Structure probing data (DMS and 2A3) for a 177-nucleotide construct. Source: RMDB library OK1LIB, as collected in RNAgym. Reactivities are given for positions 27 through 126.
RNA sequence: GGGAACGACUCGAGUAGAGUCGAAAAGAAAAUAAAUUGGAGACAUGACGACUAGUCAUGGACUGACGACAGUGGAAGUCAGGAACACUGGAAUAGUCGAUCCGUUAAAGCGAGCGAGCAAGCAAAAGGGUUAUCUUAUGUUCGCAUAAGAUAACCCAAAAGAAACAACAACAACAAC
Reactivity to DMS in 0.01 (KOAc 150mM, MgCl2 10mM, bicine 150mM(pH8.5), 24C), signal-to-noise 2, nucleotides 027 to 126: g050a080a060a020a090u030a000a060a060u020u000g000g000a020g030a300c030a010u000g000a050c020g000a110c190u010a030g020u000c000a000u030g000g000a050c070u020g020a050c060g010a190c020a030g030u000g000g070a060a090g000u000c090a050g050g010a140a070c040a000c080u020g010g010a100a100u000a100g040u000c010g000a090u010c030c040g050u010u080a110a100a130g000c020g000a120g000c050g030a050g000c030a040a020g080c100a070a080a070a050
Reactivity to 2A3 in 0.01 (KOAc 150mM, MgCl2 10mM, bicine 150mM(pH8.5), 24C), signal-to-noise 2, nucleotides 027 to 126: g020a000a030a010a000u260a000a070a000u300u160g080g000a100g000a000c020a050u000g030a030c120g030a080c180u130a030g020u030c000a070u060g020g020a000c000u000g000a000c020g010a010c040a030g040u090g040g180a050a120g150u150c050a030g060g090a070a000c000a000c000u000g010g000a140a060u050a020g080u080c050g070a140u000c000c030g000u030u050a090a030a030g070c000g000a040g030c030g000a010g040c100a060a000g000c050a210a000a000a080